RNA sequence: GGGAACGACUCGAGUAGAGUCGAAAAGUUGAGGAACACACUCGCGCCCAAAUUCGAUGGAAGCAAGGUAGGCCGGAAGCGCCUCGAGGUUGCAUCUGGUUGAAGGCUCGCGGUCAAAGCUACCUGGUGCGGUCAAAGUUGCCAUCCCAGGGCUCAGAGUCCAAUUGAUAUUCGUAUCAAUUGGACUAAAAGAAACAACAACAACAAC
Reactivity to 2A3 in 0.01 (KOAc 150mM, MgCl2 10mM, bicine 150mM(pH8.5), 24C), signal-to-noise 2, nucleotides 027 to 156: g110u160u170g000a010g010g110a220a000c040a000c010a050c200u060c000g000c000g060c040c030c050a070a080a120u240u150c040g020a030u080g040g080a040a040g020c050a040a040g120g030u120a010g090g000c070c000g030g020a090a040g010c060g000c040c010u060c050g130a160g000g070u130u240g050c000a020u030c000u030g050g000u100u060g030a020a000g030g030c040u030c030g010c060g010g010u130c080a160a060a020g000c000u030a130c020c010u010g000g040u090g030c200g010g030u020c060a120a070a130g050u160u090g120c000c020a000u000c000c000c000a020g000g000g000c040u060c060a030g020
Reactivity to DMS in 0.01 (KOAc 150mM, MgCl2 10mM, bicine 150mM(pH8.5), 24C), signal-to-noise 1, nucleotides 027 to 156: g030u000u000g000a140g000g000a090a100c060a170c040a060c060u000c000g030c060g000c000c000c040a020a140a160u000u010c000g020a110u030g000g020a130a050g040c010a060a120g010g040u000a110g030g000c030c010g040g000a080a280g060c100g040c020c030u000c130g010a060g000g050u000u000g080c010a160u000c010u020g000g010u000u010g010a030a140g030g000c000u000c040g060c090g000g010u000c060a080a070a070g030c000u000a040c030c010u000g020g060u030g020c000g030g050u000c040a080a060a240g020u000u000g010c000c030a130u010c070c000c010a300g070g030g030c030u000c030a150g000